[RMDB]
RNA sequence: GGGAACGACUCGAGUAGAGUCGAAAAAACAAAAACAAAAUCGCGGAGGCGCAGCUAACUGAUUCUUUUGGAGAGGAGUUGCUGUCGGGACCCGUCCCGCAGCCAGUCGGAAGAAGAAUAAAACUGCUAGAAUCUAUCUGUUCGCAGAUAGAUUCUAAAAAGAAACAACAACAACAAC
Reactivity to 2A3 in 0.01 (KOAc 150mM, MgCl2 10mM, bicine 150mM(pH8.5), 24C), signal-to-noise 6, nucleotides 027 to 126: a000a010c140a030a080a030a010a000c100a070a110a010a060u120c050g000c030g050g040a030g040g010c030g000c020a020g000c020u080a020a060c060u050g040a090u040u040c010u030u100u070u100g140g050a100g000a030g100g020a070g050u090u050g020c000u010g120u170c020g000g010g010a020c000c030c070g120u080c010c000c000g000c000a000g010c010c030a020g060u060c020g040g000a040a020g020a010a000g020a030a010u070a070a090a020a030c040u060g010c020
Reactivity to DMS in 0.01 (KOAc 150mM, MgCl2 10mM, bicine 150mM(pH8.5), 24C), signal-to-noise 3, nucleotides 027 to 126: a080a060c110a100a050a060a070a100c130a050a060a090a130u030c070g010c080g010g000a050g000g010c050g020c030a040g000c060u020a050a100c130u020g010a080u020u000c010u000u010u010u000g020g010a200g000a110g010g010a080g000u030u020g000c000u000g010u030c010g030g000g000a020c020c180c170g000u010c000c000c000g000c010a020g010c010c040a040g030u000c000g030g020a080a050g000a020a030g020a030a050u010a080a090a120a130c030u010g020c110

Record summary: This 177-nucleotide RNA was probed chemically with 2A3 and DMS. For DMS, 4,631 sequencing reads were counted. The reactions ran in a buffer of 150 mM KOAc, 10 mM MgCl2 and 150 mM bicine (pH 8.5), at 24 C. For 2A3, 4,265 sequencing reads were counted.